Chemical mapping of a 207-nucleotide RNA with 2A3. The reactions ran in a buffer of 150 mM KOAc, 10 mM MgCl2 and 150 mM bicine (pH 8.5), at 24 C. For 2A3, 616 sequencing reads were counted. Values cover nucleotides 27 to 156. It was measured as part of the RMDB library ARCHII.

RNA sequence: GGGAACGACUCGAGUAGAGUCGAAAAAGGUUAGCCGUGGCUGUUUGGCCCUGUCAUAUGGCGUUUUGCCCCGGUGAAGUUUAAAUAAUAUGACUAUGAUCGUAGAGAUUAGUGACGGGAUGCGUUUGGACAGGGGUUCAAUUCCCCUCAUCUCCAUGCAACUAGUUAGGUUCGCCUAACUAGUUGCAAAAGAAACAACAACAACAAC
Reactivity to 2A3 in 0.01 (KOAc 150mM, MgCl2 10mM, bicine 150mM(pH8.5), 24C), signal-to-noise 1, nucleotides 027 to 156: a000g000g000u000u030a040g000c020c000g010u010g010g000c030u040g050u290u270u090g080g000c000c000c000u010g000u010c010a000u010a000u020g010g000c000g000u060u040u180u120g030c000c000c000c000g030g000u050g030a090a040g040u120u240u210a060a040a000u020a000a000u000a000u000g000a000c020u010a080u120g040a080u040c010g000u100a030g020a010g040a100u050u040a040g130u040g090a010c130g000g000g030a050u040g130c100g010u080u180u060g060g010a020c040a060g000g000g010g000u010u070c010a000a040u030u070c020c000c000c020u020c000a040u000c040u000c000c010a020u060